Chemical mapping of a 177-nucleotide RNA with 2A3 and DMS. For DMS, 6,589 sequencing reads were counted. For 2A3 the reverse transcriptase was SuperScript II with manganese. The RNA was probed in 150 mM KOAc, 10 mM MgCl2 and 150 mM bicine (pH 8.5) at 24 C.
RNA sequence: GGGAACGACUCGAGUAGAGUCGAAAAGAUAUGGACCCGAAACAGCGCGAAACCUACAUUCGGAAACGAAUGCUAGGGAGCUGUAGGGUCCUAAGUCAAAGCAAUAUUCCGUUCGCGGAAUAUUGCACCAUGAACUAGGGUUCGCCCUAGUUCAUGGAAAAGAAACAACAACAACAAC
Reactivity to 2A3 in 0.01 (KOAc 150mM, MgCl2 10mM, bicine 150mM(pH8.5), 24C), signal-to-noise 4, nucleotides 027 to 126: g000a010u000a010u050g000g000a000c010c010c010g070a220a300a020c020a000g000c010g020c090g290a200a040a010c000c000u000a010c000a000u000u010c000g000g000a010a010a000c000g000a010a010u020g000c010u020a000g000g010g000a010g000c000u000g010u050a080g000g000g000u000c000c010u000a000a000g000u000c000a050a080a060g000c000a000a010u000a000u010u000c020c010g020u060u090c300g010c010g120g000a000a010u000a000u010u000g000c000a010
Reactivity to DMS in 0.01 (KOAc 150mM, MgCl2 10mM, bicine 150mM(pH8.5), 24C), signal-to-noise 5, nucleotides 027 to 126: g000a020u000a010u020g000g010a020c000c000c010g020a130a300a300c010a010g010c000g040c220g000a130a100a070c000c000u000a040c000a020u000u000c010g010g010a010a010a010c000g000a030a000u010g000c300u000a010g000g010g000a000g000c000u000g010u010a300g000g010g000u000c000c000u000a000a060g000u000c000a090a100a190g010c010a000a000u000a000u000u010c000c000g010u000u020c240g030c010g000g000a020a000u000a000u000u000g010c000a070